Structure probing data (DMS and 2A3) for a 177-nucleotide construct. It was measured as part of the RMDB library OK2TST. Values cover nucleotides 27 to 126. The RNA was probed in 150 mM KOAc, 10 mM MgCl2 and 150 mM bicine (pH 8.5) at 24 C. The DMS profile rests on 1,813 reads.

RNA sequence: GGGAACGACUCGAGUAGAGUCGAAAAGGAGCGGACUUUGAUGUCCGGCUCUGAGGGCACUGACCUGCCGCGCGUGCUGGUCGUCGGCAGCGCCAACCUCGACUUCGUGACCAGGCUGUCGCACCUGGCAUCCAGCGUAAUUCGUUACGCUGGAUGCAAAAGAAACAACAACAACAAC
Reactivity to DMS in 0.01 (KOAc 150mM, MgCl2 10mM, bicine 150mM(pH8.5), 24C), signal-to-noise 2, nucleotides 027 to 126: g000g000a030g010c000g010g010a020c000u000u000u000g010a120u000g000u000c000c000g020g020c030u010c020u000g000a090g020g000g000c050a090c140u000g000a080c040c010u000g020c000c030g010c100g000c070g020u010g030c140u000g010g000u010c030g020u010c020g000g020c010a070g000c130g010c020c020a100a160c060c010u000c020g000a100c140u000u000c050g010u000g000a180c040c030a020g010g010c040u000g020u010c130g020c130a090c020c030u000g000
Reactivity to 2A3 in 0.01 (KOAc 150mM, MgCl2 10mM, bicine 150mM(pH8.5), 24C), signal-to-noise 3, nucleotides 027 to 126: g010g000a010g000c020g010g020a010c020u180u220u300g180a170u300g060u030c010c000g110g090c000u010c000u000g010a040g000g030g010c030a030c130u090g000a040c030c010u000g030c010c000g000c040g010c010g030u160g090c060u130g060g090u140c040g050u070c000g010g000c000a000g010c020g000c040c020a140a200c010c020u040c030g030a060c040u120u100c080g100u070g010a060c000c020a060g060g000c050u070g000u060c040g030c050a070c040c000u030g070